[RMDB]
RNA sequence: GGGAACGACUCGAGUAGAGUCGAAAAGAUAUGGAUGUAUUAGUACAGGCAUUGGAGGUGAGCUCGGAAACGAGCUCACUACCCACCCAAUGAACUACCUGGACCAUACAUCCUAAGUCAAAACCUCGAGCAAUGGUUUCGACCAUUGCUCGAGGAACCCAUGUAUACGCUUCGGCGUAUACAUGGGAAAAGAAACAACAACAACAAC
Reactivity to 2A3 in 0.01 (KOAc 150mM, MgCl2 10mM, bicine 150mM(pH8.5), 24C), signal-to-noise 1, nucleotides 027 to 156: g010a000u010a010u040g000g000a000u000g010u000a010u000u060a020g020u020a010c000a010g040g040c000a010u000u010g000g000a000g000g020u010g000a000g010c000u010c010g000g000a020a010a010c000g000a000g020c020u000c010a000c000u010a020c000c030c000a030c010c010c000a010a000u010g020a040a040c040u060a090c300c000u000g000g010a000c010c000a000u000a000c000a000u000c000c000u000a000a000g000u000c000a010a010a060a270c000c000u010c010g000a000g030c010a030a010u010g000g100u120u200u240c300g080a030c010c000a000u000u010g020c040u000c000g000a000g000g000a000a000

Annotation
The record gives the reactivity of an RNA of 207 nucleotides to 2A3. The RNA was probed in 150 mM KOAc, 10 mM MgCl2 and 150 mM bicine (pH 8.5) at 24 C. The data come from the RNA Mapping Database (RMDB), library RNAMAK. The 2A3 profile rests on 1,566 reads. Reactivities are rounded to 0.1 and cut off at 0 and 3.